[RMDB]
RNA sequence: GGGAACGACUCGAGUAGAGUCGAAAAGGCCGAUUGUAUCUUGGCGCAGAACAUGGAAAUUUAUCGCAUUAAGAAGUACAUUGGCGCAUACGCGGCGGUGGUGGGGCCAGAGCUAGAUGCGAUUGUCGUCCGAAAAUACUUUCGAGUAUUUUCGGACAAAAGAAACAACAACAACAAC
Reactivity to 2A3 in 0.01 (KOAc 150mM, MgCl2 10mM, bicine 150mM(pH8.5), 24C), signal-to-noise 2, nucleotides 027 to 126: g060g000c020c000g060a070u040u150g030u040a100u060c040u020u140g030g020c020g000c050a040g060a060a040c050a080u060g040g120a100a060a070u110u190u090a090u070c020g000c010a000u030u100a110a060g060a140a010g060u030a020c030a100u030u070g040g000c020g000c050a010u050a210c090g010c030g100g000c060g030g050u050g030g030u030g000g010g000g020c000c010a020g000a010g040c000u020a050g000a080u060g040c010g010a030u030u080g090u050c060
Reactivity to DMS in 0.01 (KOAc 150mM, MgCl2 10mM, bicine 150mM(pH8.5), 24C), signal-to-noise 3, nucleotides 027 to 126: g020g000c030c010g010a060u000u020g010u000a060u020c030u000u000g010g010c030g000c050a130g030a100a100c170a110u000g020g010a050a080a100u010u000u000a070u020c070g000c060a020u000u000a080a100g000a080a070g030u000a060c050a060u010u000g000g010c010g030c110a120u010a080c110g000c060g020g020c050g010g030u000g000g040u000g010g000g020g030c070c050a050g020a070g010c030u010a130g000a030u000g000c030g000a070u000u000g010u000c130